[RMDB]
RNA sequence: GGGAACGACUCGAGUAGAGUCGAAAACCCGCCAAAGCAUAAAUUUUAAAGAAAACGAGGAGAAGAAGGAACUCACCUGUCGUCGUCGACGAAGGCCGGUGAGAAAGGAGCUGCCAGCACUAAGCCGGGAAUAAUGUAUGUUCGCAUACAUUAUUCCAAAAGAAACAACAACAACAAC
Reactivity to 2A3 in 0.01 (KOAc 150mM, MgCl2 10mM, bicine 150mM(pH8.5), 24C), signal-to-noise 2, nucleotides 027 to 126: c000c020c000g010c000c030a140a050a000g030c000a060u110a130a120a110u190u240u120u210a170a200a050g050a070a100a010a030c040g000a000g010g010a030g020a030a080g040a050a020g070g030a040a000c010u000c000a000c000c010u030g020u000c020g010u000c020g100u080c090g070a240c020g000a040a000g000g000c020c010g000g010u030g000a000g000a000a060a000g030g000a000g010c000u040g070c040c000a000g030c000a020c100u040a050a040g080c040c050g120
Reactivity to DMS in 0.01 (KOAc 150mM, MgCl2 10mM, bicine 150mM(pH8.5), 24C), signal-to-noise 3, nucleotides 027 to 126: c010c000c000g000c110c090a050a090a090g010c060a080u000a060a080a110u010u000u000u000a080a090a110g020a070a050a080a060c110g000a060g010g000a060g010a060a050g010a050a060g000g000a080a150c020u000c010a020c020c010u000g000u000c010g010u000c030g030u020c220g010a050c060g000a030a020g020g020c020c060g030g000u000g000a000g000a040a050a060g000g000a070g030c050u000g020c050c030a080g010c060a050c030u000a070a060g000c050c060g010

This 177-nucleotide RNA was probed chemically with 2A3 and DMS. 2A3 adducts were read by reverse transcription with SuperScript II with manganese. High 2A3 reactivity points to a flexible backbone, as in loops and unpaired stretches.